[RMDB]
RNA sequence: GGGAACGACUCGAGUAGAGUCGAAAAUCAGCAGCUGCGUUGGUCGCAAAGGUGAUGAGAUCUUGGCUGAUCGGAUUGACUGCCAUUUGGUCUUGUCCAAUACCGAUAUGAAAUUUAGCAGGAUCAACUGCGUGUACUGUUUCGACAGUACACGCAGAAAAGAAACAACAACAACAAC
Reactivity to DMS in 0.01 (KOAc 150mM, MgCl2 10mM, bicine 150mM(pH8.5), 24C), signal-to-noise 2, nucleotides 027 to 126: u010c030a090g020c060a050g010c040u000g030c060g020u000u020g000g000u010c060g030c080a060a080a110g040g040u020g010a050u000g000a130g000a010u000c020u000u000g010g040c020u000g020a070u000c000g000g010a110u010u010g000a020c010u010g000c000c000a230u010u000u000g010g000u010c060u000u000g020u000c050c170a090a070u000a120c110c020g000a060u000a110u010g000a050a050a120u010u000u020a070g010c010a050g010g000a040u000c070a060a180
Reactivity to 2A3 in 0.01 (KOAc 150mM, MgCl2 10mM, bicine 150mM(pH8.5), 24C), signal-to-noise 2, nucleotides 027 to 126: u070c010a000g090c040a000g050c010u040g010c010g030u070u060g030g000u060c020g040c140a030a060a060g160g000u110g050a000u040g020a030g020a050u000c010u030u050g070g000c010u040g040a210u030c000g000g130a100u080u220g010a010c010u000g000c000c010a060u090u090u210g000g020u030c000u020u070g010u000c030c040a020a010u040a200c010c020g000a000u020a060u150g250a150a200a100u140u230u120a070g000c000a020g070g000a010u010c050a050a080
Structure probing data (DMS and 2A3) for a 177-nucleotide construct.